[RMDB]
This 177-nucleotide RNA was probed chemically with 2A3 and DMS.
For DMS, 10,517 sequencing reads were counted.
The 2A3 profile rests on 8,951 reads.
The reactions ran in a buffer of 150 mM KOAc, 10 mM MgCl2 and 150 mM bicine (pH 8.5), at 24 C.
RNA sequence: GGGAACGACUCGAGUAGAGUCGAAAAGAACCAGUGUUCGCACUGGUUCAAACCUGACAUGGGAGUCAGGAAAGUGUGCGAAAAGCACACUUAAACUCCCUAAAACCGUGAGCUUCGGCUCACGGAAGAUAUAAAUCUAGUUCGCUAGAUUUAUAUCAAAAGAAACAACAACAACAAC
Reactivity to 2A3 in 0.01 (KOAc 150mM, MgCl2 10mM, bicine 150mM(pH8.5), 24C), signal-to-noise 3, nucleotides 027 to 126: g000a000a000c000c000a000g000u010g030u040u070c170g020c090a010c000u000g000g010u000u000c000a010a000a000c000c000u000g030a010c010a060u030g030g000g010a020g010u020c020a010g020g000a040a010a000g000u010g000u000g000c020g100a210a120a020a040g000c000a000c010a000c000u000u000a010a010a000c000u020c000c000c000u070a150a170a060a130c010c000g000u000g000a010g000c040u070u220c300g090g010c000u010c000a000c000g000g010a000a010
Reactivity to DMS in 0.01 (KOAc 150mM, MgCl2 10mM, bicine 150mM(pH8.5), 24C), signal-to-noise 6, nucleotides 027 to 126: g000a010a000c000c000a010g020u000g010u010u020c210g030c010a010c000u000g010g010u000u000c000a030a090a190c020c000u000g000a070c190a120u010g010g000g010a070g010u000c030a020g000g010a060a030a010g000u000g010u000g000c000g000a100a070a120a180g000c000a000c000a000c000u000u000a030a080a060c040u000c000c000c010u000a050a080a130a140c000c000g010u000g000a010g010c000u000u010c180g020g010c000u000c000a000c000g000g010a010a020